Record summary:
Structure probing data (DMS and 2A3) for a 177-nucleotide construct. The 2A3 profile rests on 4,440 reads. Reactivities are rounded to 0.1 and cut off at 0 and 3. For 2A3 the reverse transcriptase was SuperScript II with manganese. The reactions ran in a buffer of 150 mM KOAc, 10 mM MgCl2 and 150 mM bicine (pH 8.5), at 24 C.

RNA sequence: GGGAACGACUCGAGUAGAGUCGAAAAUCAGAUGAGACUAGGCAUCAGACUAGAUAGUAUCACACUACGGGUACAUAGUAGAGACAUACAUAGAUGUGUAUGACACAUCAGAGGCGCGGGCCACCGAAUUAGCUAUAUCCUUCGGGAUAUAGCUAAUAAAAGAAACAACAACAACAAC
Reactivity to DMS in 0.01 (KOAc 150mM, MgCl2 10mM, bicine 150mM(pH8.5), 24C), signal-to-noise 8, nucleotides 027 to 126: u010c070a090g010a110u000g000a100g010a100c060u000a070g000g000c040a060u000c090a070g000a080c060u000a060g010a140u000a090g020u000a080u000c080a090c100a090c080u000a050c120g010g010g020u000a050c070a060u000a050g010u000a040g000a120g020a090c080a040u010a030c090a070u000a110g010a030u000g010u000g010u010a090u010g010a140c030a030c030a030u000c010a090g000a090g020g010c070g000c100g000g010g000c040c040a060c050c050g000a110
Reactivity to 2A3 in 0.01 (KOAc 150mM, MgCl2 10mM, bicine 150mM(pH8.5), 24C), signal-to-noise 4, nucleotides 027 to 126: u050c020a020g050a100u070g050a010g040a090c040u040a010g020g010c010a030u000c030a060g060a070c020u020a030g050a110u060a070g050u030a010u070c040a030c010a020c190u160a030c050g030g000g030u070a050c040a050u060a040g060u030a010g020a010g010a070c000a050u110a040c050a030u120a090g100a080u070g040u000g000u050a150u250g080a030c010a000c000a020u000c010a000g030a040g090g000c060g000c060g030g060g020c010c000a010c000c020g020a040